[RMDB]
RNA sequence: GGGAACGACUCGAGUAGAGUCGAAAAUGAAUCGAGAUAGAGAUAGAAAUAGCAAGGGGUUCUAUUGUAAACGGCCGAAUAGAACCCUGUGCACGUGGUCCGCCCACGGCUGUCGGGUUUAGGCCAACGAUUAUCACAGUUUCGACUGUGGUAGUCGAAAAGAAACAACAACAACAAC
Reactivity to 2A3 in 0.01 (KOAc 150mM, MgCl2 10mM, bicine 150mM(pH8.5), 24C), signal-to-noise 9, nucleotides 027 to 126: u140g030a020a040u080c060g010a020g050a160u070a060g070a020g050a030u060a080g160a050a110a050u170a050g060c080a080a110g000g000g010g000u000u000c010u010a010u010u040g080u090a070a070a040c070g000g000c000c000g010a000a000u010a010g000a000a000c000c000c000u000g010u010g000c050a040c020g000u010g000g010u020c030c120g020c030c010c000a000c000g010g010c010u010g040u040c020g030g020g000u030u050u080a030g000g000c000c000a000a010
Reactivity to DMS in 0.01 (KOAc 150mM, MgCl2 10mM, bicine 150mM(pH8.5), 24C), signal-to-noise 9, nucleotides 027 to 126: u030g000a050a040u010c040g000a110g010a070u020a050g010a070g010a060u010a060g010a070a090a100u020a080g010c040a090a140g010g000g000g000u000u000c000u000a010u000u000g010u010a040a080a100c170g000g010c010c030g010a040a010u000a020g010a010a010c000c000c000u000g000u020g010c030a100c030g010u000g000g010u020c120c170g000c110c000c010a020c030g000g010c010u000g000u000c040g010g000g010u010u010u010a080g010g010c010c010a060a160
Chemical mapping of a 177-nucleotide RNA with 2A3 and DMS. In probing experiments dimethyl sulfate is read out at A N1 and C N3, which are open when not base-paired. 2A3 adducts were read by reverse transcription with SuperScript II with manganese. For DMS the reverse transcriptase was MarathonRT. The RNA was probed in 150 mM KOAc, 10 mM MgCl2 and 150 mM bicine (pH 8.5) at 24 C. As a SHAPE reagent, 2A3 marks flexible, mostly unpaired nucleotides at the ribose 2'-OH. For DMS, 48,872 sequencing reads were counted.